[RMDB]
RNA sequence: GGGAACGACUCGAGUAGAGUCGAAAACUCACUUUCGGGUGGGCGAAGCUGAGAACUUAAGCGCCAGUAAACGGCGGUGGUAACUAUAACCAUCCUAAGGUAGCGAAAUUCCUUGUCGGGUAAGUUCCAUCCAAUGUCAUUUCGAUGACAUUGGAUGAAAAGAAACAACAACAACAAC
Reactivity to 2A3 in 0.01 (KOAc 150mM, MgCl2 10mM, bicine 150mM(pH8.5), 24C), signal-to-noise 5, nucleotides 027 to 126: c000u000c010a020c000u010u070u090c180g090g000g010u030g000g000g010c050g030a030a010g010c060u080g070a020g010a120a030c010u060u070a070a040g040c000g000c030c000a070g060u250a030a200a050c070g020g000c020g000g020u020g000g000u050a070a030c070u050a100u060a300a020c010c000a000u030c000c010u030a070a020g080g010u020a040g080c020g070a050a040a040u060u010c000c000u020u050g120u060c050g010g040g000u040a060a050g030u020u010c010
Reactivity to DMS in 0.01 (KOAc 150mM, MgCl2 10mM, bicine 150mM(pH8.5), 24C), signal-to-noise 6, nucleotides 027 to 126: c020u000c030a080c060u000u010u010c140g010g000g050u000g010g000g000c060g010a070a130g020c040u010g010a110g010a060a070c040u010u000a070a120g020c030g010c020c000a100g000u010a050a110a120c160g000g010c050g010g020u000g000g000u000a080a120c200u010a090u000a080a070c030c010a020u000c020c040u000a090a080g000g010u010a060g010c040g010a060a060a130u000u000c010c020u000u010g010u000c070g000g000g000u000a040a070g000u000u000c030